RNA sequence: GGGAACGACUCGAGUAGAGUCGAAAACUGGUCGUGUACUGGGAUGAUCUGUCGCAGGACGUUCGGGAUCGUGUGACGGCGCGGCUCACGCAGGCUCAGGCCGACGCGCUGUACGCGACGGUGGGCCAAGUCACGCGUUGUUCGCAACGCGUGACUUAAAAGAAACAACAACAACAAC
Reactivity to 2A3 in 0.01 (KOAc 150mM, MgCl2 10mM, bicine 150mM(pH8.5), 24C), signal-to-noise 1, nucleotides 027 to 126: c010u090g050g000u030c030g050u020g010u060a000c030u070g040g070g050a120u080g050a110u080c060u200g100u070c060g040c050a030g010g140a030c010g030u160u100c070g100g040g060a210u060c100g040u050g000u080g050a050c020g000g000c000g050c000g030g110c010u000c020a090c070g020c080a060g020g000c010u020c100a060g220g000c030c000g040a040c000g000c010g000c030u040g050u100a030c020g000c000g000a020c010g010g000u060g010g000g040c020c010
Reactivity to DMS in 0.01 (KOAc 150mM, MgCl2 10mM, bicine 150mM(pH8.5), 24C), signal-to-noise 2, nucleotides 027 to 126: c040u000g000g000u020c040g030u010g000u010a050c020u000g000g000g000a110u000g000a080u000c000u010g020u000c090g030c130a100g000g010a040c000g000u010u000c180g020g020g000a150u000c000g010u000g020u010g020a050c020g020g000c020g030c050g010g000c080u010c130a070c160g010c170a140g010g030c010u010c210a110g030g080c020c000g000a130c040g000c020g030c100u000g000u000a000c020g030c000g010a070c020g000g000u000g000g010g010c070c060